[RMDB]
RNA sequence: GGGAACGACUCGAGUAGAGUCGAAAAGAUAUGGACGCUCUACCCACCUCGGAGCGUGUGGUCGGAAACGACCACAUACGCUCUAAGAGGAGCGUCCUAAGUCAAAAGGUUUCGUUCGCGAAACCAACAACAUAAACGGGUUCGCCCGUUUAUGUUGAAAAGAAACAACAACAACAAC
Reactivity to DMS in 0.01 (KOAc 150mM, MgCl2 10mM, bicine 150mM(pH8.5), 24C), signal-to-noise 5, nucleotides 027 to 126: g000a060u010a170u010g000g010a020c010g010c000u000c000u000a130c020c010c030a300c110c010u000c040g000g000a010g040c000g000u000g010u000g000g000u000c000g000g000a110a110a220c000g030a020c000c000a000c010a040u000a060c030g000c000u000c000u000a040a010g000a110g030g000a010g010c010g000u000c000c000u000a010a080g000u010c140a100a080a100a090g000g000u000u000u000c000g030u020u020c200g010c010g010a010a000a010c010c000a050a120
Reactivity to 2A3 in 0.01 (KOAc 150mM, MgCl2 10mM, bicine 150mM(pH8.5), 24C), signal-to-noise 3, nucleotides 027 to 126: g060a070u200a210u300g000g010a000c000g010c010u040c010u100a300c030c020c010a070c020c020u040c040g010g000a010g000c010g000u000g000u000g010g010u020c030g030g030a050a070a130c000g000a000c000c000a000c000a000u020a000c000g010c000u030c000u000a080a010g010a010g000g030a000g000c010g010u000c000c000u010a030a000g130u020c110a050a040a050a200g000g010u010u000u020c030g020u030u140c300g000c000g140a000a000a000c000c010a000a020